An RNA of 177 nucleotides, treated with DMS and 2A3 and read out base by base. For DMS the reverse transcriptase was MarathonRT. It was measured as part of the RMDB library RFMREP. The DMS profile rests on 1,211 reads.

[RMDB]
RNA sequence: GGGAACGACUCGAGUAGAGUCGAAAAUCGCGCUUGUCGUCCGGCCGUCACGGCAGCCGGGCCAACGCGCAUAGAUAAUCUGGUCGCACCGCUGCCCCACAAGGGCACCGACAGGCGCAUCACAGAUCAAUUACUAUGGGUUCGCCCAUAGUAAUUGAAAAGAAACAACAACAACAAC
Reactivity to DMS in 0.01 (KOAc 150mM, MgCl2 10mM, bicine 150mM(pH8.5), 24C), signal-to-noise 2, nucleotides 027 to 126: u000c100g000c010g020c000u000u000g010u000c100g000u000c020c050g010g000c010c020g000u020c080a130c300g050g020c020a050g000c000c010g010g000g000c020c050a030a070c280g010c040g060c080a050u000a050g010a120u020a060a110u000c050u000g000g010u000c020g010c030a170c090c040g030c170u020g000c020c010c010c090a150c300a110a300g000g000g000c000a020c120c030g000a070c170a050g000g000c020g000c080a060u010c050a080c050a110g000a120u000
Reactivity to 2A3 in 0.01 (KOAc 150mM, MgCl2 10mM, bicine 150mM(pH8.5), 24C), signal-to-noise 3, nucleotides 027 to 126: u090c020g000c000g000c010u010u040g030u070c040g010u000c010c040g000g000c010c010g070u070c050a060c130g070g010c020a000g020c030c010g000g000g020c030c010a040a030c080g000c000g000c010a010u090a020g070a030u140a100a090u070c020u020g030g010u150c020g000c010a010c040c030g010c040u010g010c000c000c010c010a100c010a090a080g010g010g000c000a010c020c010g030a020c010a040g030g000c010g000c020a020u070c020a040c010a030g050a050u040
Background: The RNA was probed in 150 mM KOAc, 10 mM MgCl2 and 150 mM bicine (pH 8.5) at 24 C.